[RMDB]
Chemical mapping of a 177-nucleotide RNA with 2A3 and DMS. 2A3 adducts were read by reverse transcription with SuperScript II with manganese. Conditions: 150 mM KOAc, 10 mM MgCl2 and 150 mM bicine (pH 8.5), 24 C. The data come from the RNA Mapping Database (RMDB), library OK1LIB.
RNA sequence: GGGAACGACUCGAGUAGAGUCGAAAAACAGAGACACCAGUCACAGUCACUAGAACUCACGCUACGUCAAGUCGGAUGUGACAGCGAGAAAGCAAGCGCAAGCUUUAGCGUUACGUACGAGUGGCGAAAAUAUUUAUAAAUUCGUUUAUAAAUAUUUAAAAGAAACAACAACAACAAC
Reactivity to 2A3 in 0.01 (KOAc 150mM, MgCl2 10mM, bicine 150mM(pH8.5), 24C), signal-to-noise 7, nucleotides 027 to 126: a000c050a010g090a010g050a060c020a020c060c020a010g020u040c020a030c020a080g020u030c010a030c060u040a040g040a180a030c010u020c040a050c040g030c030u090a030c030g050u020c040a060a060g120u040c010g030g050a070u090g050u050g060a020c030a040g000c010g010a080g220a140a050a000g020c060a050a040g080c070g000c170a110a060g020c000u030u040u050a010g000c000g010u010u030a010c040g020u030a010c010g010a030g040u020g010g000c000g040a000
Reactivity to DMS in 0.01 (KOAc 150mM, MgCl2 10mM, bicine 150mM(pH8.5), 24C), signal-to-noise 5, nucleotides 027 to 126: a100c100a070g000a120g000a110c070a070c070c040a080g000u000c030a070c090a110g010u010c030a040c050u020a080g010a100a080c060u000c110a100c050g000c050u010a080c060g010u020c030a050a080g010u000c030g010g000a050u020g010u010g000a010c020a070g020c000g000a120g010a060a050a040g010c040a030a100g010c090g000c190a100a120g000c000u010u000u000a090g010c000g000u000u010a040c060g000u010a060c040g010a060g010u010g000g000c010g000a100